[RMDB]
RNA sequence: GGGAACGACUCGAGUAGAGUCGAAAAGAAGGUCGAGUGCACGACCAGAGAGUGCGGUGAGAGACCGACAAAGAGUUCGAAUCGGAACGAACUACCGCAUACGAUCGACUGAAGAUCGAAGUGAGAAGACGAUUACUCGGUUCGCCGAGUAAUCGUCAAAAGAAACAACAACAACAAC
Reactivity to 2A3 in 0.01 (KOAc 150mM, MgCl2 10mM, bicine 150mM(pH8.5), 24C), signal-to-noise 2, nucleotides 027 to 126: g010a060a040g000g000u020c000g030a070g140u150g100c030a000c020g000a000c000c000a010g060a000g000a000g110u160g000c000g000g000u000g020a120g000a010g010a050c000c000g050a010c050a000a090a030g110a040g060u030u120c080g090a040a040u000c000g070g020a130a050c000g000a100a030c000u030a090c000c040g000c000a000u000a090c000g000a070u040c010g080a040c040u250g080a080a010g000a000u030c030g020a030a060g090u040g080a090g000a130a090
Reactivity to DMS in 0.01 (KOAc 150mM, MgCl2 10mM, bicine 150mM(pH8.5), 24C), signal-to-noise 2, nucleotides 027 to 126: g000a160a050g000g080u000c020g000a280g000u000g100c110a250c030g010a010c050c060a140g000a200g010a110g020u010g000c000g000g010u000g000a140g000a170g000a120c040c000g000a000c070a140a020a070g000a080g000u030u000c010g000a080a170u020c020g090g020a150a040c000g000a080a140c050u040a090c050c120g010c000a000u000a090c030g020a010u000c030g000a130c130u120g000a080a140g000a030u000c020g020a080a080g030u050g080a030g030a090a070

This 177-nucleotide RNA was probed chemically with 2A3 and DMS. It was measured as part of the RMDB library OK1LIB. 2A3 adducts were read by reverse transcription with SuperScript II with manganese. The 2A3 profile rests on 1,424 reads. The RNA was probed in 150 mM KOAc, 10 mM MgCl2 and 150 mM bicine (pH 8.5) at 24 C.